[RMDB]
RNA sequence: GGGAACGACUCGAGUAGAGUCGAAAAGAUAUGGAUCUGUAGCGAUCAUCGAUCUCGGAAACGAGGGAGAUCCUACUGGAUCCUAAGUCAAAACACUUGCACGACGGUUCGCCGUCGUGCAAGUGAACUAAUACUAAGGGUUCGCCCUUAGUAUUAGAAAAGAAACAACAACAACAAC
Reactivity to 2A3 in 0.01 (KOAc 150mM, MgCl2 10mM, bicine 150mM(pH8.5), 24C), signal-to-noise 4, nucleotides 027 to 126: g030a010u080a030u180g010g000a010u000c020u040g010u010a020g030c110g190a010u020c030a070u300c060g050a090u030c010u010c000g020g040a130a070a050c010g000a010g000g010g000a020g000a000u010c000c000u040a070c120u130g050g020a000u010c000c000u010a120a020g060u030c020a010a030a130a080c010a000c000u000u010g000c040a010c000g020a000c030g000g120u070u110c300g050c160c000g000u000c000g010u000g000c020a000a000g000u000g000a000a000
Reactivity to DMS in 0.01 (KOAc 150mM, MgCl2 10mM, bicine 150mM(pH8.5), 24C), signal-to-noise 5, nucleotides 027 to 126: g000a040u000a300u000g010g000a010u000c000u000g020u000a020g010c220g010a020u000c010a230u010c180g010a090u010c000u010c000g010g000a090a110a170c000g000a010g000g000g000a050g000a010u000c010c000u000a000c010u010g030g010a020u000c000c010u000a020a090g010u010c030a080a080a130a190c010a000c000u000u000g000c000a000c000g000a020c000g000g010u000u010c270g010c000c000g020u000c000g000u010g000c000a000a000g000u000g000a020a150